RNA sequence: GGGAACGACUCGAGUAGAGUCGAAAAACCUUUGUGCUAAGACAUGCUCUAUGGAGGAAUGCCCUCCCAUUGGGAGGGAACUACAUUUGAAGUAGAGCAACAGCUUAGCACUCUGGUAAAACGAACAGUUAAGCUGUUCGCAGCUUAACUGUUCGAACUACGUAGAAGACUUCGGUCUUCUACGUAGAAAAGAAACAACAACAACAAC
Reactivity to 2A3 in 0.01 (KOAc 150mM, MgCl2 10mM, bicine 150mM(pH8.5), 24C), signal-to-noise 5, nucleotides 027 to 156: a000c010c000u010u000u010g000u000g010c000u000a000a010g000a120c030a130u040g000c000u000c010u010a020u020g030g020a080g060g150a030a010u020g010c020c020c000u010c030c040c040a300u260u300g010g000g000a000g000g000g040a000a010c040u190a020c010a010u010u020u060g020a040a000g010u000a000g000a010g000c020a000a000c000a000g000c000u000u000a000g000c000a000c000u000c000u000g000g000u050a070a080a020a080c010g000a000a000c000a000g000u000u000a000a000g000c000u020g050u130u100c300g010c060a000g000c000u000u000a000a000c000u000g010u000u000c000g000a000a000
Reactivity to DMS in 0.01 (KOAc 150mM, MgCl2 10mM, bicine 150mM(pH8.5), 24C), signal-to-noise 1, nucleotides 027 to 156: a110c000c000u000u000u000g000u010g000c000u010a010a010g000a070c050a300u000g000c000u000c010u010a020u000g020g010a300g000g000a030a030u000g000c000c050c000u010c000c000c010a210u000u040g090g050g020a030g040g010g010a000a000c040u000a290c010a020u000u000u000g000a300a300g000u000a000g010a020g020c010a020a070c100a190g010c000u000u000a010g010c000a030c000u000c010u000g000g000u000a100a070a070a180c000g000a010a030c010a030g020u010u000a010a060g000c040u000g000u000u020c200g020c000a020g010c000u000u010a040a040c010u010g000u000u010c010g000a050a150